RNA sequence: GGGAACGACUCGAGUAGAGUCGAAAACGUGAACAUCGCUCUGCUAAGUCCCGUCGUUCUUCCAGUCAGAGCGAGAUUGUAAGCAACCUUAUGCGCAAUGAAGACAUAGAGGGACUUCUCGAUGAAGCACCGGAUCGCAGUUCGCUGCGAUCCGGUGAAAAGAAACAACAACAACAAC
Reactivity to 2A3 in 0.01 (KOAc 150mM, MgCl2 10mM, bicine 150mM(pH8.5), 24C), signal-to-noise 1, nucleotides 027 to 126: c000g160u160g180a080a100c100a000u000c000g000c000u000c000u070g000c230u100a060a070g030u000c050c050c050g120u100c000g000u000u000c000u090u030c000c010a030g010u050c000a000g040a000g020c020g000a000g000a010u140u140g000u040a060a060g080c100a000a210c000c000u030u000a000u140g030c000g000c000a040a050u300g000a300a000g000a000c000a000u010a000g130a000g000g000g000a000c000u000u000c000u010c050g010a130u000g020a050a050g000